RNA sequence: GGGAACGACUCGAGUAGAGUCGAAAAGACGCCUAAUGGCGAAAAUGUAAAAUCAACUACACAUAAGAUAAAUACAAAUGCUAAAUCUCGGAACUAGUUGAUCUAGUCCAGCGGUGAGAUCCGCAGACAUGCGCAGGGAGUUCGCUCCCUGCGCAUGAAAAGAAACAACAACAACAAC
Reactivity to 2A3 in 0.01 (KOAc 150mM, MgCl2 10mM, bicine 150mM(pH8.5), 24C), signal-to-noise 1, nucleotides 027 to 126: g080a000c120g120c000c000u120a220a160u300g000g000c070g130a140a230a000a030u300g000u130a090a000a000a000u010c000a000a080c000u180a070c070a000c050a000u000a000a050g020a170u030a020a030a000u180a000c000a120a100a000u100g000c000u200a000a290a290u000c130u000c000g100g000a020a000c000u000a000g000u000u150g000a000u100c000u030a000g020u000c000c000a000g050c120g000g000u000g000a100g000a170u050c000c000g040c100a000g070a130
The record gives the reactivity of an RNA of 177 nucleotides to 2A3. Reactivities are given for positions 27 through 126. It was measured as part of the RMDB library OK1LIB.